RNA sequence: GGGAACGACUCGAGUAGAGUCGAAAACGAGCAGGGCCGGGUUACUUGGCUCUGUAGCUAAAGGUAAGGUAACUCGCUGAUGACCGGCCUGCCGACCGGCUAAGUCAGAGGCUAAAUCCAAAUAGGUCGGCUAAGUAUGUAGAGCUGUCUGUAGAGGCACACAUGCAUAGUUCGCUAUGCAUGUGUGAAAAGAAACAACAACAACAAC
Reactivity to 2A3 in 0.01 (KOAc 150mM, MgCl2 10mM, bicine 150mM(pH8.5), 24C), signal-to-noise 1, nucleotides 027 to 156: c020g010a000g000c000a000g000g000g000c000c000g000g000g000u000u010a020c010u020u010g040g000c030u020c000u020g010u000a060g050c020u110a070a140a150g090g090u090a020a000g000g000u000a010a000c000u000c030g010c000u020g020a090u020g010a020c040c100g000g010c000c010u020g000c000c000g000a000c000c000g000g000c010u010a020a010g000u000c010a010g010a000g010g000c020u010a010a020a040u230c090c050a030a000a020u010a000g010g000u000c030g000g000c010u010a000a000g030u020a090u300g050u110a030g020a030g110c030u040g050u060c050u080g050u060a040g050a030g240g000

About this RNA
Source: RMDB library RSTRND, as collected in RNAgym. The record gives the reactivity of an RNA of 207 nucleotides to 2A3. Reactivities are given for positions 27 through 156. The 2A3 profile rests on 856 reads. Conditions: 150 mM KOAc, 10 mM MgCl2 and 150 mM bicine (pH 8.5), 24 C. For 2A3 the reverse transcriptase was SuperScript II with manganese.